Chemical mapping of a 177-nucleotide RNA with 2A3 and DMS. The reactions ran in a buffer of 150 mM KOAc, 10 mM MgCl2 and 150 mM bicine (pH 8.5), at 24 C. High 2A3 reactivity points to a flexible backbone, as in loops and unpaired stretches. For 2A3 the reverse transcriptase was SuperScript II with manganese. For DMS the reverse transcriptase was MarathonRT.
RNA sequence: GGGAACGACUCGAGUAGAGUCGAAAAGGCCUCGGCGUCUCGCGGGCGCCCCAGAUUUCGCGCUCACGACCGCGACGAGCCCGCCCCGCUUCGCUCGGUGGGCGGAAACGCGCGGACCGGCGGCGGCUCCGCAGGAAAGAUUCGUCUUUCCUGCGGAAAAAGAAACAACAACAACAAC
Reactivity to 2A3 in 0.01 (KOAc 150mM, MgCl2 10mM, bicine 150mM(pH8.5), 24C), signal-to-noise 1, nucleotides 027 to 126: g040g040c010c000u020c040g170g030c030g040u070c030u020c070g060c050g000g000g020c020g030c000c030c030c050a120g020a200u120u270u140c120g010c000g000c010u000c010a030c050g010a040c010c010g040c000g140a200c020g000a040g000c000c020c010g030c040c010c000c000g000c060u090u230c100g030c190u110c030g030g070u090g070g050g010c020g060g030a130a040a010c010g000c010g000c020g040g130a120c090c000g000g050c030g000g080c000g030g000c040
Reactivity to DMS in 0.01 (KOAc 150mM, MgCl2 10mM, bicine 150mM(pH8.5), 24C), signal-to-noise 2, nucleotides 027 to 126: g000g000c050c040u010c060g010g010c020g010u000c140u010c050g050c100g000g010g010c020g000c000c080c060c110a160g000a190u000u020u000c140g000c010g000c020u020c030a120c050g000a110c090c120g010c010g020a120c030g000a090g000c230c010c030g000c030c030c000c030g010c090u030u000c150g020c050u010c070g000g000u010g000g010g010c020g010g000a040a170a150c040g000c040g030c030g000g020a100c100c030g000g000c120g020g000c030g010g010c100